[RMDB]
RNA sequence: GGGAACGACUCGAGUAGAGUCGAAAACUCAUACUUUGAGAACACCACCAUACUUCAAAGUGUGGCCUCAGCUUAUGCUGCAUUGCCUAGUUGGAUUGCACUUGAAAAAGCUCGCGCUGAUCUUGAAGAGGCUAAGAAAAAUGAUGUUAGCCCUCAAAGGCUGUAAAAGUUUCGACUUUUACAGCCUAAAAGAAACAACAACAACAAC
Reactivity to 2A3 in 0.01 (KOAc 150mM, MgCl2 10mM, bicine 150mM(pH8.5), 24C), signal-to-noise 1, nucleotides 027 to 156: c010u050c000a070u020a060c040u050u100u140g000a040g050a110a020c030a050c050c050a020c040c000a060u070a110c020u100u170c100a050a130a000g050u030g040u020g010g090c040c020u050c010a000g000c020u020u080a050u290g040c020u000g000c050a040u060u110g140c000c020u040a120g070u070u090g000g050a080u020u040g000c020a000c030u010u030g060a070a070a000a000a000g100c050u100c080g080c020g010c040u090g030a100u040c040u000u050g060a180a130g050a080g010g040c000u000a020a030g180a020a100a070a020a010u150g020a000u110g020u100u020a020g000c020c000c000u040c010a030a050
Reactivity to DMS in 0.01 (KOAc 150mM, MgCl2 10mM, bicine 150mM(pH8.5), 24C), signal-to-noise 1, nucleotides 027 to 156: c000u000c010a120u000a050c030u000u000u000g020a080g030a080a110c030a140c060c020a130c010c040a080u010a110c060u030u000c190a060a130a090g070u000g000u010g000g020c040c050u010c000a060g020c040u030u000a160u010g010c030u010g050c050a050u000u010g030c020c010u030a100g070u000u000g010g020a200u000u000g040c040a090c030u000u000g000a080a080a050a040a030g030c040u030c150g010c180g010c030u020g010a130u000c070u010u000g030a100a240g000a100g030g010c030u000a010a020g000a000a030a110a110a110u010g000a050u000g030u000u000a050g000c020c040c080u000c040a070a250

Annotation: An RNA of 207 nucleotides, treated with 2A3 and DMS and read out base by base. DMS adducts were read by reverse transcription with MarathonRT. Values cover nucleotides 27 to 156. For DMS, 1,620 sequencing reads were counted. For 2A3, 503 sequencing reads were counted.